[RMDB]
RNA sequence: GGGAACGACUCGAGUAGAGUCGAAAAGCAUAUUGUUCGGGAAACCGAACGCAAGUAACUUAGUUACUUAUUUAACUUCCUGUAUAUUUUUAAACCUAAUUUUGGGUUCGUAAUGCACCGCUCUUUGGACAUUUUCGUGUUUCGACACGAAAAUGUCAAAAGAAACAACAACAACAAC
Reactivity to 2A3 in 0.01 (KOAc 150mM, MgCl2 10mM, bicine 150mM(pH8.5), 24C), signal-to-noise 2, nucleotides 027 to 126: g040c030a010u200a050u240u120g010u000u000c000g000g010g010a030a060a050c010c000g000a000a000c000g040c000a000a000g030u000a040a050c190u250u300a010g100u030u000a000c000u000u030a210u040u250u070a030a120c030u000u030c000c000u000g040u090a170u000a180u110u100u000u030u210a070a080a080c000c000u050a260a220u160u100u100u010g030g020g000u090u020c000g030u060a120a160u070g030c030a070c010c030g020c060u000c000u000u090u000g010
The data come from the RNA Mapping Database (RMDB), library RFM100. Structure probing data (2A3) for a 177-nucleotide construct. For 2A3 the reverse transcriptase was SuperScript II with manganese.